[RMDB]
RNA sequence: GGGAACGACUCGAGUAGAGUCGAAAAAAAUGAUGAAGUCACGACAUGCUUCUUCAUAAAAUCCAUUUAAUCAUUUGACACUGAAAUUGGAAGCUUGUUUGGCCGGUUGGAGCAUUAAAGUUGAGCAUCCUACAGGAACGUUCGCGUUCCUGUAGGAAAAAGAAACAACAACAACAAC
Reactivity to DMS in 0.01 (KOAc 150mM, MgCl2 10mM, bicine 150mM(pH8.5), 24C), signal-to-noise 1, nucleotides 027 to 126: a050a030a000u010g010a010u000g020a050a020g010u000c130a080c110g030a110c110a300u020g000c040u000u000c010u000u000c030a020u010a020a110a050a110u030c030c020a130u000u000u010a140a050u010c030a090u000u010u000g010a040c080a070c130u000g000a060a090a030u000u000g000g010a020a040g020c060u000u000g010u010u000u000g000g020c020c070g040g020u000u000g020g010a050g000c090a090u010u020a040a070a150g000u000u000g000a080g040c100a110